The record gives the reactivity of an RNA of 177 nucleotides to 2A3 and DMS. For DMS, 2,682 sequencing reads were counted. Values cover nucleotides 27 to 126. Source: RMDB library OK2TST, as collected in RNAgym. DMS adducts were read by reverse transcription with MarathonRT. For 2A3, 1,461 sequencing reads were counted. The RNA was probed in 150 mM KOAc, 10 mM MgCl2 and 150 mM bicine (pH 8.5) at 24 C.
RNA sequence: GGGAACGACUCGAGUAGAGUCGAAAAUUGAUUAGCUUGAACAGCUGAUGGUUCAACAUUAUUAGUUGCAGGUGCUUGUGCACUCAUGUUUGCUCCAUUAGCACCUGUUGCAUGGUAAUUCCAAGCAUCCCAUAAGAUGCUUCGGCAUCUUAUGGGAAAAAGAAACAACAACAACAAC
Reactivity to 2A3 in 0.01 (KOAc 150mM, MgCl2 10mM, bicine 150mM(pH8.5), 24C), signal-to-noise 2, nucleotides 027 to 126: u020u040g020a000u020u030a000g030c000u010u080g060a030a030c030a050g050c020u040g000a060u070g000g040u090u070c030a040a020c000a090u040u120a020u050u060a120g060u060u110g020c000a010g020g000u010g000c000u050u160g020u050g000c040a020c050u100c060a100u190g070u150u120u040g030c060u040c090c010a030u180u000a000g020c000a000c020c000u020g020u030u060g030c010a000u000g010g000u070a070a080u180u000c000c000a010a060g050c000a080
Reactivity to DMS in 0.01 (KOAc 150mM, MgCl2 10mM, bicine 150mM(pH8.5), 24C), signal-to-noise 3, nucleotides 027 to 126: u000u010g010a050u000u000a030g010c020u000u000g010a150a240c140a080g010c030u000g010a050u010g000g000u010u010c100a070a070c110a090u010u000a050u010u010a090g010u000u010g000c010a020g000g000u000g010c010u000u000g000u000g020c070a060c120u010c200a090u020g020u010u000u010g000c100u000c140c080a060u000u010a010g000c000a020c010c020u000g010u000u000g020c020a060u010g010g000u000a040a050u010u000c040c010a060a120g020c160a210